Conditions: 150 mM KOAc, 10 mM MgCl2 and 150 mM bicine (pH 8.5), 24 C. An RNA of 207 nucleotides, treated with 2A3 and read out base by base.
RNA sequence: GGGAACGACUCGAGUAGAGUCGAAAAAAACUUUUGUGACUUGCUGAAACGGGACUAAUCUCCUCACCGAGGCUAAGCGAGUAAAAUACGCCUCUCAUAUCCUUACCUGAGGGUGGUAAGGAAAUAACCUGCAACGCUUCCUUCGGGAAGCGUUGAAUCUAUCACUGGUCUUCGGACCAGUGAUAGAAAAAGAAACAACAACAACAAC
Reactivity to 2A3 in 0.01 (KOAc 150mM, MgCl2 10mM, bicine 150mM(pH8.5), 24C), signal-to-noise 1, nucleotides 027 to 156: a000a000a000c140u150u130u060u060g040u020g030a000c010u070u030g020c010u090g020a160a000a050c040g010g000g020a000c010u090a000a100u100c040u040c060c020u050c040a070c020c100g010a020g000g060c020u010a030a000g030c030g050a040g070u090a030a080a020a000u110a010c140g000c000c000u000c000u000c000a010u000a090u240c010c000u000u040a020c000c010u090g040a100g060g030g020u010g020g050u020a000a000g010g040a000a010a010u020a000a000c010c080u050g000c000a000a000c000g000c000u000u000c000c000u000u000c120g020g020g000a000a000g000c010g010u010u010g000a030a040
The 2A3 profile rests on 688 reads.